[RMDB]
RNA sequence: GGGAACGACUCGAGUAGAGUCGAAAACACAUUCUAUUCGUAGAAUGUGGAACGUAGAGAGAUCGACAGCGUCGCAGCUAUGUCGAACGAGGAAGAGCGGGCAGGGAUCGGGCUUCGGCCCGAUCAACAACGAUCUAGAUUUCGAUCUAGAUCGUUGAAAAGAAACAACAACAACAAC
Reactivity to 2A3 in 0.01 (KOAc 150mM, MgCl2 10mM, bicine 150mM(pH8.5), 24C), signal-to-noise 5, nucleotides 027 to 126: c010a000c000a000u010u000c000u030a040u050u080c160g080u020a000g000a010a000u000g000u010g000g020a090a020c050g070u150a020g030a010g010a010g010a180u030c020g030a010c020a010g020c010g080u190c130g010c100a090g010c030u140a070u220g040u030c020g010a070a040c050g020a050g040g020a040a060g020a020g050c060g010g000g000c040a050g140g030g000a010u010c000g000g000g000c010u050u070c230g060g000c000c000c000g010a000u000c000a000a020
Reactivity to DMS in 0.01 (KOAc 150mM, MgCl2 10mM, bicine 150mM(pH8.5), 24C), signal-to-noise 9, nucleotides 027 to 126: c000a010c000a000u000u000c000u000a020u000u000c200g020u000a000g010a010a000u000g010u000g000g010a070a070c130g010u010a070g010a110g010a130g010a080u000c010g000a030c020a050g010c030g010u010c300g010c180a130g010c020u000a060u010g020u000c010g010a020a110c080g000a100g000g000a050a030g000a050g010c050g010g010g010c110a070g000g000g000a010u000c000g000g000g010c000u000u010c220g040g000c000c000c000g010a000u000c010a060a150